[RMDB]
RNA sequence: GGGAACGACUCGAGUAGAGUCGAAAAACAACAGCUUUUCUAUACAGAGGACAUGGCCUCAAGAUUUGCUGAUGGGCUCUGCUUAUUUUGGAACUGUAAUGUACCAAAAUAUCCUAAUAAUGCAAUUUAAGCAAGUUGUUCGCAACUUGCAAAAGAAACAACAACAACAAC
Reactivity to 2A3 in 0.01 (KOAc 150mM, MgCl2 10mM, bicine 150mM(pH8.5), 24C), signal-to-noise 8, nucleotides 027 to 129: a010c070a010a000c000a000g000c000u000u030u010u000c020u020a110u050a160c110a080g010a010g010g040a020c070a220u190g140g060c010c000u000c000a000a000g000a020u010u030u030g000c010u010g010a090u050g040g000g000c010u010c000u000g010c010u040u010a000u020u000u010u010g010g010a020a030c010u020g060u290a100a070u190g020u020a050c000c000a000a020a000a000u040a030u000c020c030u030a090a070u150a150a060u160g050c090a050a070u080u130u120a100a000
Reactivity to DMS in 0.01 (KOAc 150mM, MgCl2 10mM, bicine 150mM(pH8.5), 24C), signal-to-noise 4, nucleotides 027 to 129: a150c070a090a110c020a030g050c030u040u010u010u030c000u000a190u010a190c210a190g020a030g060g020a130c110a150u070g050g030c010c060u050c000a080a060g000a040u090u010u010g050c010u010g020a150u000g060g010g000c000u010c030u000g020c040u040u010a020u000u000u000u000g010g000a100a070c040u030g040u080a050a070u110g020u000a110c030c000a000a010a090a000u020a060u040c040c010u030a100a000u030a060a020u080g020c000a010a000u040u050u010a060a110